[RMDB]
RNA sequence: GGGAACGACUCGAGUAGAGUCGAAAAGCCUUACGAUUCGUCGUAAGGCAUACAAAGUUUUGGCACUAUGAGCCCGCAGCGAUGGUGCUCCCACGCGGUGCAAUACGACGGAUUUCGAUCCGUCGAACCAAAUGACUCACUUCGGUGAGUCAUUUGGAAAAGAAACAACAACAACAAC
Reactivity to 2A3 in 0.01 (KOAc 150mM, MgCl2 10mM, bicine 150mM(pH8.5), 24C), signal-to-noise 2, nucleotides 027 to 126: g010c000c000u000u010a000c000g000a020u030u080c210g010u000c010g010u130a000a000g020g000c000a000u030a000c040a000a080a010g030u040u040u150u210g080g000c000a020c020u040a080u250g030a020g010c020c000c030g020c070a090g040c000g110a120u090g050g000u090g030c010u010c000c010c010a050c050g000c050g020g010u060g030c010a040a070u120a110c020g000a000c000g000g000a000u000u050u130c180g090a030u030c000c000g000u010c010g000a000a000
Reactivity to DMS in 0.01 (KOAc 150mM, MgCl2 10mM, bicine 150mM(pH8.5), 24C), signal-to-noise 2, nucleotides 027 to 126: g020c000c000u000u000a010c000g010a010u000u010c140g060u000c000g020u000a020a000g000g000c010a020u000a000c190a040a110a090g020u000u000u000u020g010g000c000a070c070u000a060u010g000a150g000c020c020c130g040c090a100g010c090g000a090u000g000g020u000g010c070u000c020c030c010a100c180g000c040g000g050u000g030c070a040a060u020a130c020g020a010c010g000g000a010u000u000u020c170g020a000u000c000c000g010u000c010g000a000a130
The record gives the reactivity of an RNA of 177 nucleotides to 2A3 and DMS. The 2A3 profile rests on 2,283 reads.